[RMDB]
RNA sequence: GGGAACGACUCGAGUAGAGUCGAAAAGAUAUGGAAUGUUGCGAUGAGUGGCCGUCGGAAACGACGGACCACGAGCACCAUUCCUAAGUCAAACUAUUGGCCAUACGUUCGCGUAUGGCCAAUAGAACCUAAAGUAGUACUUCGGUACUACUUUAGGAAAAGAAACAACAACAACAAC
Reactivity to DMS in 0.01 (KOAc 150mM, MgCl2 10mM, bicine 150mM(pH8.5), 24C), signal-to-noise 6, nucleotides 027 to 126: g000a030u000a240u010g000g000a020a000u000g000u000u000g010c000g000a170u010g000a210g010u000g000g000c000c000g010u000c000g010g000a060a040a120c010g010a020c000g000g000a060c000c000a010c010g000a140g010c010a010c050c000a020u000u000c000c000u000a020a070g010u000c020a130a120a250c000u000a000u000u000g000g000c000c000a010u000a010c000g020u000u010c270g020c000g010u000a000u000g000g000c000c000a000a000u000a000g010a070a150
Reactivity to 2A3 in 0.01 (KOAc 150mM, MgCl2 10mM, bicine 150mM(pH8.5), 24C), signal-to-noise 2, nucleotides 027 to 126: g020a000u070a030u100g000g010a000a000u000g020u020u000g020c110g190a300u230g140a180g130u000g000g030c000c000g000u000c010g000g000a030a020a030c000g000a000c030g010g000a010c000c000a000c010g000a000g010c000a000c000c010a010u010u000c000c000u000a030a010g030u010c040a080a050a120c010u000a020u020u020g000g000c000c000a000u000a010c000g030u030u080c300g010c010g170u040a000u000g000g000c000c000a000a010u000a000g000a000a000